[RMDB]
Structure probing data (DMS and 2A3) for a 207-nucleotide construct. For 2A3, 1,325 sequencing reads were counted. In probing experiments dimethyl sulfate is read out at A N1 and C N3, which are open when not base-paired.

RNA sequence: GGGAACGACUCGAGUAGAGUCGAAAAUAGGAAGAGUGGAGUCAAUUGACUCAUCCAUGUAGAGAGACCUCCAGUAUGAAAAUACAGGCAUAUCUUUUCCUCCCUUAAAAGCGUGAUGAUUGGGUUUUCACAUGUAUGAGUGAGAUGUGCCUCCCUCCUGAGUUUUCAUAUUCGUAUGAAAACUCAGAAAAGAAACAACAACAACAAC
Reactivity to DMS in 0.01 (KOAc 150mM, MgCl2 10mM, bicine 150mM(pH8.5), 24C), signal-to-noise 2, nucleotides 027 to 156: u000a090g000g010a100a110g000a080g000u030g010g010a090g020u000c060a100a150u000u010g010a070c020u010c010a050u010c010c010a150u000g000u000a070g020a180g010a080g000a070c030c000u010c060c060a120g060u010a040u000g000a150a050a150a070u000a030c030a070g020g010c100a060u000a050u000c010u020u030u000u000c080c040u000c030c100c030u000u000a040a060a090a100g020c120g010u000g000a050u000g010a080u020u000g030g030g010u000u000u000u000c030a030c020a070u000g000u000a040u000g000a090g050u000g000a090g000a110u000g010u000g010c080c040u000c020c000c030u000c010
Reactivity to 2A3 in 0.01 (KOAc 150mM, MgCl2 10mM, bicine 150mM(pH8.5), 24C), signal-to-noise 2, nucleotides 027 to 156: u190a000g020g070a050a040g030a020g060u220g010g000a000g010u010c030a030a140u040u130g040a020c000u000c010a000u000c000c010a010u070g020u060a120g040a040g050a050g020a140c010c010u050c050c010a050g020u070a010u080g060a040a070a040a020u120a040c050a020g030g010c050a040u040a070u120c030u100u050u060u050c010c010u080c030c020c020u060u070a150a160a040a000g100c050g050u050g040a060u010g010a050u120u300g020g030g000u030u020u070u030c010a000c000a000u010g020u010a020u010g010a000g020u010g020a110g010a080u070g000u000g080c000c000u000c020c000c010u020c020

Reactivities are given for positions 27 through 156. For DMS the reverse transcriptase was MarathonRT. 2A3 adducts were read by reverse transcription with SuperScript II with manganese. The RNA was probed in 150 mM KOAc, 10 mM MgCl2 and 150 mM bicine (pH 8.5) at 24 C.